The record gives the reactivity of an RNA of 177 nucleotides to 2A3 and DMS. The data come from the RNA Mapping Database (RMDB), library TTRDES. DMS adducts were read by reverse transcription with MarathonRT. For 2A3 the reverse transcriptase was SuperScript II with manganese.
RNA sequence: GGGAACGACUCGAGUAGAGUCGAAAAGAUAUGGAUAACUAUACUCCGAUAAGCUGGUGUCGGAAACGACAUCAGCAGCUUUUGACGGAGUAGUUAUCCUAAGUCAAACGGGACGUUCGCGUCCCGAGCCAGAUAUAUACUUCGGUAUAUAUCUGGCAAAAGAAACAACAACAACAAC
Reactivity to 2A3 in 0.01 (KOAc 150mM, MgCl2 10mM, bicine 150mM(pH8.5), 24C), signal-to-noise 7, nucleotides 027 to 126: g000a000u010a000u040g000g000a000u000a010a010c010u020a030u270a300c010u000c000c050g280a300u080a300a000g000c000u000g000g020u010g000u010c000g000g000a000a000a000c000g010a010c000a010u010c000a000g000c010a000g000c000u280u300u290u300g300a140c070g000g000a000g000u000a000g000u000u000a000u000c000c000u000a000a000g000u000c010a090a040a100c020g000g010g000a000c000g020u080u130c300g020c010g180u000c000c000c000g000a020
Reactivity to DMS in 0.01 (KOAc 150mM, MgCl2 10mM, bicine 150mM(pH8.5), 24C), signal-to-noise 4, nucleotides 027 to 126: g010a000u000a010u010g010g000a010u000a000a010c010u010a130u020a150c020u000c000c000g020a230u030a020a080g000c000u000g000g010u000g010u000c000g020g000a010a010a020c000g010a030c000a000u000c000a010g020c000a010g000c170u000u010u010u010g020a240c080g000g010a010g010u000a010g000u000u000a010u000c000c000u000a000a050g000u000c000a050a110a290c030g010g000g000a020c000g020u010u020c280g030c020g010u000c000c000c000g000a030